Structure probing data (DMS and 2A3) for a 177-nucleotide construct. For 2A3 the reverse transcriptase was SuperScript II with manganese. The 2A3 profile rests on 4,695 reads.
RNA sequence: GGGAACGACUCGAGUAGAGUCGAAAAGAUAUGGAUCACCGUGUAGACAUGAUGAGUCGGAAACGAUCCAUCAACAGCUACGUGAUCCUAAGUCAAAUCCCCUCAAGUCUUCGGACUUGAGGGGAAAGUACGUAGUGACGUUCGCGUCACUACGUACAAAAGAAACAACAACAACAAC
Reactivity to DMS in 0.01 (KOAc 150mM, MgCl2 10mM, bicine 150mM(pH8.5), 24C), signal-to-noise 2, nucleotides 027 to 126: g000a000u000a150u000g010g010a000u000c000a020c050c300g010u000g030u000a050g010a120c140a110u010g000a010u000g000a060g000u000c020g020g010a060a020a070c000g000a010u010c030c000a000u010c000a050a050c300a150g000c000u030a090c160g000u000g000a020u000c010c000u000a020a050g000u000c010a060a120a150u000c000c000c000c000u010c000a010a000g000u000c000u000u020c240g010g000a020c000u000u000g000a010g010g040g000g000a000a030a030
Reactivity to 2A3 in 0.01 (KOAc 150mM, MgCl2 10mM, bicine 150mM(pH8.5), 24C), signal-to-noise 2, nucleotides 027 to 126: g010a010u010a010u040g000g000a000u000c020a030c100c140g020u040g050u120a180g120a300c170a220u030g000a020u010g010a000g010u000c000g020g000a010a010a010c000g000a000u000c060c000a010u000c010a010a240c100a080g080c010u030a010c010g000u010g010a000u010c010c000u000a030a010g010u010c020a020a040a190u040c000c010c000c000u000c000a020a000g000u010c010u100u300c300g100g010a000c000u000u010g000a000g010g000g010g040a020a000a000